Background
Source: RMDB library OK3TST, as collected in RNAgym. Chemical mapping of a 207-nucleotide RNA with DMS and 2A3.
RNA sequence: GGGAACGACUCGAGUAGAGUCGAAAAUUGCUCUUAUUGUUAAUAGCUGUAUAUUUGAUGUCAGUUCAAGGAUAGCUAAGUACAGUAUCUGACAUGAAAGAAUAAUUCAGUAUCCUUGGGUCAAGAAGCUGAAUAAAUGAAUACCUUAGAAAAGGAAAUAGGGAUACCUAUUCGUAGGUAUCCCUAUAAAAGAAACAACAACAACAAC
Reactivity to DMS in 0.01 (KOAc 150mM, MgCl2 10mM, bicine 150mM(pH8.5), 24C), signal-to-noise 2, nucleotides 027 to 156: u000u000g010c000u000c090u000u000a080u020u000g010u000u010a150a150u030a100g010c050u000g040u000a030u000a100u000u000u000g020a050u000g000u000c020a100g010u030u030c150a110a070g040g010a040u000a020g010c040u000a040a160g010u000a020c010a060g030u000a050u010c050u000g020a070c020a070u000g000a140a060a120g000a070a060u000a090a100u030u000c010a010g010u000a140u000c000c000u000u010g030g030g010u000c040a040a030g010a030a160g010c000u000g000a020a050u010a050a030a150u010g000a140a140u000a030c010c010u000u000a080g000a060a110a020a020g020g010a100a210
Reactivity to 2A3 in 0.01 (KOAc 150mM, MgCl2 10mM, bicine 150mM(pH8.5), 24C), signal-to-noise 2, nucleotides 027 to 156: u080u070g070c010u020c010u050u040a140u090u080g000u020u050a090a030u030a120g030c010u000g080u010a080u000a080u120u020u060g030a010u010g030u050c050a030g020u080u080c150a070a050g110g000a040u030a010g040c050u100a050a020g030u010a020c000a020g020u020a030u040c050u000g030a020c010a050u020g030a070a020a110g040a040a080u090a090a050u070u020c020a000g010u010a040u010c010c010u040u000g150g020g050u060c030a050a050g050a060a000g060c010u010g020a020a020u060a080a100a000u080g030a110a050u120a300c000c000u000u070a090g140a110a170a040a040g010g000a050a140